Chemical mapping of a 177-nucleotide RNA with 2A3 and DMS. Reactivities are given for positions 27 through 126. For 2A3 the reverse transcriptase was SuperScript II with manganese. DMS adducts were read by reverse transcription with MarathonRT. The RNA was probed in 150 mM KOAc, 10 mM MgCl2 and 150 mM bicine (pH 8.5) at 24 C.
RNA sequence: GGGAACGACUCGAGUAGAGUCGAAAAGAUAUGGAUACGCAGGCGAUAAGAUGUAUUCGGAAACGAAUAAACAUCUUUUGACGCCUGAAAUCCUAAGUCAAAACCACAAAGGUUCGCCUUUGUGGAAGUCCAUACGCUAGUUCGCUAGCGUAUGGACAAAAGAAACAACAACAACAAC
Reactivity to 2A3 in 0.01 (KOAc 150mM, MgCl2 10mM, bicine 150mM(pH8.5), 24C), signal-to-noise 2, nucleotides 027 to 126: g030a000u060a010u180g030g000a020u030a070c120g010c050a020g000g000c020g040a030u040a270a000g000a000u020g000u030a020u000u010c020g000g030a050a050a020c010g000a010a020u060a070a080a010c010a010u000c000u040u030u040u090g060a020c020g000c000c020u000g020a010a000a000u000c000c000u010a170a000g020u020c020a040a030a110a220c050c000a000c000a010a010a000g060g050u040u090c300g250c020c010u010u000u000g000u020g000g000a000a030
Reactivity to DMS in 0.01 (KOAc 150mM, MgCl2 10mM, bicine 150mM(pH8.5), 24C), signal-to-noise 2, nucleotides 027 to 126: g000a020u000a300u020g000g000a030u000a070c300g010c000a000g000g020c000g000a100u000a030a020g010a000u000g000u000a030u000u000c000g000g000a080a030a090c020g000a010a000u020a070a060a150c020a010u000c010u000u000u000u010g010a240c060g020c000c000u020g000a010a000a020u000c000c000u010a030a130g000u010c030a100a060a150a170c000c010a010c000a000a010a000g000g030u000u000c220g030c000c000u000u010u010g010u000g000g020a010a050